[RMDB]
About this RNA
Structure probing data (2A3 and DMS) for a 177-nucleotide construct. Conditions: 150 mM KOAc, 10 mM MgCl2 and 150 mM bicine (pH 8.5), 24 C. DMS adducts were read by reverse transcription with MarathonRT. The 2A3 profile rests on 1,718 reads.
RNA sequence: GGGAACGACUCGAGUAGAGUCGAAAAUGGGCGCGGUGGCCAACAUGGCACCGGAUCUCUUCGCCGGAAUCCUUGCGCAGGUGCCGUUCGUGGACCCGCUGACCACCAUCUUGGAUCCAUCGUUGCCUGUCACUUCCAUUUUCGAAUGGAAGUGACAAAAAGAAACAACAACAACAAC
Reactivity to 2A3 in 0.01 (KOAc 150mM, MgCl2 10mM, bicine 150mM(pH8.5), 24C), signal-to-noise 1, nucleotides 027 to 126: u140g020g020g020c000g000c000g000g000u010g020g010c000c020a000a000c030a040u020g000g010c000a040c000c000g000g000a030u010c030u000c020u160u050c100g080c020c000g000g000a030a060u100c000c000u050u070g070c060g000c120a000g050g030u070g160c010c010g050u150u120c050g040u070g020g020a040c000c030c020g000c050u060g110a170c030c040a030c020c010a030u010c000u010u010g050g010a070u140c000c000a030u010c000g000u080u300g000c000c020
Reactivity to DMS in 0.01 (KOAc 150mM, MgCl2 10mM, bicine 150mM(pH8.5), 24C), signal-to-noise 3, nucleotides 027 to 126: u000g000g010g000c020g020c000g010g020u000g020g010c010c010a020a020c170a050u020g000g030c060a090c120c050g020g000a020u000c130u000c080u000u000c220g000c300c110g010g030a040a040u000c030c020u000u000g030c230g050c160a060g000g000u000g020c020c010g010u010u010c160g000u000g010g000a030c030c000c020g000c070u000g020a080c130c150a120c070c030a020u000c100u010u000g000g000a120u010c000c000a000u000c010g010u000u000g010c010c000